[RMDB]
RNA sequence: GGGAACGACUCGAGUAGAGUCGAAAAGAUAUGGAGAUUAUACGAGCGUUGAAACACCAGAUAAUGUGGACUCGGAAACGAGUCGUAACAUCAUUAUCUGGUGUGGAGCUCGUAAUCUCCUAAGUCACCUACGUAAUUUGUUCGCAAAUUACGUAGGAAAAGAAACAACAACAACAAC
Reactivity to 2A3 in 0.01 (KOAc 150mM, MgCl2 10mM, bicine 150mM(pH8.5), 24C), signal-to-noise 1, nucleotides 027 to 126: g000a030u120a040u220g020g020a000g040a030u010u140a110u140a300c000g000a000g060c080g290u300u070g000a020a020a010c000a010c000c010a010g000a010u030a030a020u070g000u030g170g020a010c000u010c000g010g000a020a060a060c030g010a010g000u010c000g000u030a020a060c020a110u300c010a020u040u030a020u020c010u000g000g060u010g000u010g000g000a000g000c000u010c000g000u010a000a000u000c000u000c000c010u000a060a000g010u020c000a060
Reactivity to DMS in 0.01 (KOAc 150mM, MgCl2 10mM, bicine 150mM(pH8.5), 24C), signal-to-noise 4, nucleotides 027 to 126: g000a060u010a300u000g000g000a020g000a010u000u000a180u010a070c030g010a010g020c000g020u000u010g010a250a200a020c000a000c000c010a000g010a020u010a000a010u000g020u000g010g000a010c000u000c000g020g000a080a070a160c010g010a010g020u000c000g020u010a040a200c170a060u000c040a010u010u000a010u000c020u000g000g020u000g000u000g010g000a050g030c000u000c000g020u000a000a000u000c000u000c010c000u000a000a060g000u000c060a270

This 177-nucleotide RNA was probed chemically with 2A3 and DMS. Reactivities are rounded to 0.1 and cut off at 0 and 3. The reactions ran in a buffer of 150 mM KOAc, 10 mM MgCl2 and 150 mM bicine (pH 8.5), at 24 C. Values cover nucleotides 27 to 126. It was measured as part of the RMDB library TTRINS. For 2A3 the reverse transcriptase was SuperScript II with manganese.